The record gives the reactivity of an RNA of 177 nucleotides to 2A3 and DMS. The reactions ran in a buffer of 150 mM KOAc, 10 mM MgCl2 and 150 mM bicine (pH 8.5), at 24 C. DMS (dimethyl sulfate) methylates the pairing face of unpaired adenines and cytosines.
RNA sequence: GGGAACGACUCGAGUAGAGUCGAAAACACCUAACGUUCGCGUUAGGUGAAAGAUGCAAGUAAACCUGGAUCGAGGCAUCAUGAAGAACCAGGAGAAAUAAAAAACGACAGGGUUCGCCCUGUCGAAGAUAUUGGACAGGUUCGCCUGUCCAAUAUCAAAAGAAACAACAACAACAAC
Reactivity to 2A3 in 0.01 (KOAc 150mM, MgCl2 10mM, bicine 150mM(pH8.5), 24C), signal-to-noise 2, nucleotides 027 to 126: c000a000c000c000u000a000a000c000g050u020u050c300g010c020g100u020u000a010g000g010u000g000a010a000a000g040a000u090g000c060a000a100g060u190a140a080a130c000c010u000g000g030a040u140c080g030a070g120g000c030a070u070c000a010u180g140a080a100g030a020a070c000c020a000g030g020a050g070a030a130a030u180a030a220a000a030a010a020c000g000a000c000a000g030g030g010u050u050c110g070c030c000c020u000g000u000c000g000a010a010
Reactivity to DMS in 0.01 (KOAc 150mM, MgCl2 10mM, bicine 150mM(pH8.5), 24C), signal-to-noise 2, nucleotides 027 to 126: c010a030c000c000u010a010a000c010g020u000u010c220g030c020g010u000u020a000g000g000u000g010a010a060a080g000a030u000g020c030a110a110g040u020a060a090a090c020c000u000g000g000a130u010c070g020a080g010g020c030a040u000c030a100u010g040a110a100g000a110a050c010c000a020g000g010a190g040a100a110a090u020a010a020a030a050a070a070c060g000a020c020a000g000g020g070u000u050c300g000c050c000c000u000g000u000c000g010a000a040

About this RNA
For 2A3 the reverse transcriptase was SuperScript II with manganese.